[RMDB]
RNA sequence: GGGAACGACUCGAGUAGAGUCGAAAAAAAGUUAGCGUACUAGAGUCGCCGUGAGUACGCUAUGGUUCCGUGAGACUCUACUCGAGCGUAUCACGGAACCCACGUACAUACCGUACGUGCUAUAAAACAUACGUUACCGUUUCGACGGUAACGUAUGAAAAGAAACAACAACAACAAC
Reactivity to 2A3 in 0.01 (KOAc 150mM, MgCl2 10mM, bicine 150mM(pH8.5), 24C), signal-to-noise 3, nucleotides 027 to 126: a000a020a000g080u020u010a000g000c000g020u000a000c010u030a030g100a110g110u160c070g040c120c020g130u110g040a000g000u000a000c000g010c000u000a010u020g040g020u060u000c010c020g010u020g010a040g000a000c010u000c010u000a010c000u010c010g000a000g000c010g010u020a050u040c020a000c000g010g010a010a020c000c010c010a000c000g000u000a010c000a080u150a180c000c170g000u000a010c000g010u000g020c010u100a130u140a100a090a000a000
Reactivity to DMS in 0.01 (KOAc 150mM, MgCl2 10mM, bicine 150mM(pH8.5), 24C), signal-to-noise 3, nucleotides 027 to 126: a050a050a090g020u010u000a020g010c010g010u000a000c010u000a120g010a090g000u000c060g010c030c060g000u010g010a050g030u000a010c010g020c010u010a000u000g010g000u000u000c020c030g000u010g000a240g000a010c000u010c000u010a040c020u010c030g030a020g020c060g000u000a090u000c020a010c020g010g000a050a050c070c120c010a000c000g000u000a000c020a110u010a070c300c240g000u000a000c000g010u000g010c080u010a090u000a020a050a060a100